This 207-nucleotide RNA was probed chemically with 2A3 and DMS. The 2A3 profile rests on 1,457 reads. The DMS profile rests on 2,695 reads. Reactivities are given for positions 27 through 156. Conditions: 150 mM KOAc, 10 mM MgCl2 and 150 mM bicine (pH 8.5), 24 C.
RNA sequence: GGGAACGACUCGAGUAGAGUCGAAAAAUGGAGCAAAGCACAGAGCGGGUAGGCAGAACUGAGCCCGGCCUCCUGCCCUGAGGCAGCCUGCCGGGUGCCCUAGCAGUGUGGAGCCACCCCAGCCCUGAGACGCUGGGUCCCUCGAGGCCCACCUGGAUGAAUAGUAUCGUUUCGACGAUACUAUUCAAAAAGAAACAACAACAACAAC
Reactivity to 2A3 in 0.01 (KOAc 150mM, MgCl2 10mM, bicine 150mM(pH8.5), 24C), signal-to-noise 2, nucleotides 027 to 156: a010u090g050g000a020g030c030a050a020a000g010c010a010c020a060g050a010g050c040g030g010g020u130a100g050g040c090a040g050a170a050c070u070g030a010g030c030c000c000g020g000c000c030u060c010c000u010g030c000c030c030u290g030a300g030g030c050a000g020c010c030u000g000c010c020g010g010g000u050g020c040c000c050u040a040g020c000a000g000u020g010u040g170g000a030g030c030c000a030c010c010c000c000a040g000c000c030c080u110g070a100g020a060c050g030c130u040g010g000g010u060c040c010c000u050c000g010a130g010g010c000c010c000a010c060c020u040g020g030a020
Reactivity to DMS in 0.01 (KOAc 150mM, MgCl2 10mM, bicine 150mM(pH8.5), 24C), signal-to-noise 1, nucleotides 027 to 156: a060u000g010g010a140g010c020a040a130a160g040c070a110c000a060g000a110g010c030g050g010g010u000a030g010g040c040a090g030a100a300c070u010g010a260g010c000c000c040g010g000c010c020u000c120c010u000g010c000c000c090u000g000a160g040g010c020a110g030c030c060u030g010c030c000g020g020g020u000g000c030c010c050u000a110g010c040a120g030u020g020u000g030g010a220g030c010c030a130c040c020c000c040a090g040c010c010c010u010g010a170g010a080c030g000c060u010g010g050g040u000c010c010c030u010c080g020a110g020g000c020c010c000a040c090c000u000g000g010a300